[RMDB]
RNA sequence: GGGAACGACUCGAGUAGAGUCGAAAAGGGCCAUACCGGGCCCGAUACCGGAAUUAGUAGUUUUCUACGAGAGGCCCAAUCUGCGGCCUAAUGCAGUGUAGGUCGAAUCGAGGACCGAGACUCGAUAAUUACGUCGAUAGAUGGACGAUUACAUCAAACCUAAUCCCUGAUUCGUCAGGGAUUAGGUAAAAGAAACAACAACAACAAC
Reactivity to DMS in 0.01 (KOAc 150mM, MgCl2 10mM, bicine 150mM(pH8.5), 24C), signal-to-noise 2, nucleotides 027 to 156: g010g020g090c000c000a090u010a160c100c080g000g000g000c000c010c050g020a040u000a030c080c020g030g050a110a110u010u000a120g000u000a040g000u000u000u000u000c040u000a060c010g020a190g010a180g020g000c000c010c000a090a190u000c070u010g020c010g010g040c040c040u000a000a060u010g000c050a120g050u000g000u000a100g000g040u000c030g040a090a090u000c020g030a110g060g010a280c060c050g000a220g010a080c000u000c000g020a090u000a060a080u000u000a110c010g000u000c090g010a100u000a130g000a090u000g020g000a150c020g000a120u000u000a090c030a100u000c050a090a140
Reactivity to 2A3 in 0.01 (KOAc 150mM, MgCl2 10mM, bicine 150mM(pH8.5), 24C), signal-to-noise 2, nucleotides 027 to 156: g020g000g000c010c000a060u100a240c010c030g100g000g000c000c030c040g020a060u090a070c000c010g030g020a130a080u210u050a020g050u010a000g020u020u110u190u260c040u010a010c000g000a030g010a060g220g000c000c000c010a000a130u030c060u060g040c040g040g050c060c040u070a030a010u090g030c040a030g020u030g080u150a020g040g000u020c030g000a030a030u000c010g040a000g000g050a100c010c090g030a000g010a050c000u000c000g010a000u020a080a090u200u130a050c020g010u030c010g090a010u020a120g110a030u040g050g010a020c020g000a030u000u170a100c040a110u040c150a170a070
This 207-nucleotide RNA was probed chemically with DMS and 2A3. It was measured as part of the RMDB library OK3TST. For 2A3, 858 sequencing reads were counted. For 2A3 the reverse transcriptase was SuperScript II with manganese.